[RMDB]
RNA sequence: GGGAACGACUCGAGUAGAGUCGAAAAUAAGUCCACCGUUUAGCUGCCAAACAGGAUAUCUGUGGUCAGCCACCCGGCCCUAAGAUAGCCACCUGGCCCUAAGAUGGGAAUGGAAAGUACUGACUCCGAAUCCAUGGUUAUUCGUAACCAUGGAUUCAAAAGAAACAACAACAACAAC
Reactivity to 2A3 in 0.01 (KOAc 150mM, MgCl2 10mM, bicine 150mM(pH8.5), 24C), signal-to-noise 4, nucleotides 027 to 126: u170a000a010g050u030c000c000a020c010c020g010u000u020u100a030g010c030u030g030c020c030a080a150a100c030a070g040g030a100u020a040u080c020u040g080u100g050g000u070c040a020g010c030c000a050c010c040c000g050g000c030c000c000u040a080a010g020a040u090a000g040c010c000a040c000c030u010g030g010c010c000c000u040a110a070g060a160u120g010g000g060a020a110u090g040g020a090a050a030g050u030a040c060u070g090a060c020u020c040c070
Reactivity to DMS in 0.01 (KOAc 150mM, MgCl2 10mM, bicine 150mM(pH8.5), 24C), signal-to-noise 3, nucleotides 027 to 126: u040a090a090g000u000c000c010a070c110c010g050u000u010u010a070g000c050u000g020c030c050a120a130a130c180a170g000g010a090u050a010u010c020u010g000u010g010g020u020c000a060g010c050c050a020c050c060c050g000g000c000c010c000u020a140a130g000a100u020a050g000c000c000a050c050c040u000g000g000c010c260c020u010a060a040g010a070u020g000g000g020a130a040u020g000g000a060a050a080g000u010a070c040u000g000a060c010u000c080c230
The record gives the reactivity of an RNA of 177 nucleotides to 2A3 and DMS. The DMS profile rests on 3,710 reads. Reactivities are rounded to 0.1 and cut off at 0 and 3.